[RMDB]
RNA sequence: GGGAACGACUCGAGUAGAGUCGAAAAUCGGCCAGAGGAGUGGCAGGCCAUAAUGCGCAACGGCAUGACCGCGGAUCUGUCGUGGAACCGUGCGGCUCUGCAGUACGAGCAGAUCUUCAACUGGGCGCGAUGAUCGUCGUUUCGACGACGAUCAUCGAAAAGAAACAACAACAACAAC
Reactivity to DMS in 0.01 (KOAc 150mM, MgCl2 10mM, bicine 150mM(pH8.5), 24C), signal-to-noise 1, nucleotides 027 to 126: u010c030g000g000c000c020a070g000a240g030g020a030g020u000g010g020c040a100g000g000c010c100a080u000a050a060u000g010c110g020c070a150a060c070g020g000c020a020u000g020a030c190c020g000c050g040g000a080u000c040u000g020u000c050g020u000g000g000a030a120c020c010g000u010g000c060g000g010c020u020c000u010g020c060a130g020u010a110c180g030a160g010c020a090g000a060u030c000u000u000c050a060a100c090u000g000g000g000c100g000
Reactivity to 2A3 in 0.01 (KOAc 150mM, MgCl2 10mM, bicine 150mM(pH8.5), 24C), signal-to-noise 1, nucleotides 027 to 126: u040c000g000g000c000c010a040g000a020g150g030a060g000u110g050g000c040a020g100g000c010c010a100u270a210a070u200g090c130g000c060a040a050c040g000g000c050a120u190g030a070c040c030g020c000g050g050a060u070c070u110g140u050c040g060u070g010g040a080a010c030c030g030u020g050c090g000g000c020u030c060u250g000c020a030g110u120a110c090g000a040g060c010a000g010a010u060c000u020u090c050a190a170c000u020g050g090g000c070g000
Structure probing data (DMS and 2A3) for a 177-nucleotide construct. For 2A3 the reverse transcriptase was SuperScript II with manganese. DMS adducts were read by reverse transcription with MarathonRT. For 2A3, 818 sequencing reads were counted.